[RMDB]
RNA sequence: GGGAACGACUCGAGUAGAGUCGAAAAAUAAUGACCCACCAAACACAUGCAUACCACAUAGUAAACCCAAGCCCAUGACCACUUACCGGAGCCCUAUCAGCCCUUUUAAUAACAUCAGGCCUAACUAUAUGAUUCCACUUUAACUCUAUACUCUUACCAUCCUUUUCGUGUUCGCACGAAAAGGAUGAAAAGAAACAACAACAACAAC
Reactivity to 2A3 in 0.01 (KOAc 150mM, MgCl2 10mM, bicine 150mM(pH8.5), 24C), signal-to-noise 2, nucleotides 027 to 156: a000u140a000a080u090g070a060c030c020c000a030c030c040a050a110a030c060a010c010a070u100g010c000a000u050a060c000c030a030c000a070u130a030g040u070a120a060a080c000c010c030a010a000g000c000c010c000a030u080g050a060c010c010a020c040u070u040a020c020c030g040g020a030g000c000c000c030u030a040u040c050a030g010c020c000c050u000u070u090u030a140a060u180a060a010c010a020u030c020a020g030g030c030c000u050a040a010c000u030a050u000a020u250g070a080u060u020c040c000a070c040u030u090u080a040a040c000u050c030u080a050u050a140c020u010c000u050u000a060c030

Chemical mapping of a 207-nucleotide RNA with 2A3. The data come from the RNA Mapping Database (RMDB), library PDB130. Reactivities are given for positions 27 through 156. The RNA was probed in 150 mM KOAc, 10 mM MgCl2 and 150 mM bicine (pH 8.5) at 24 C.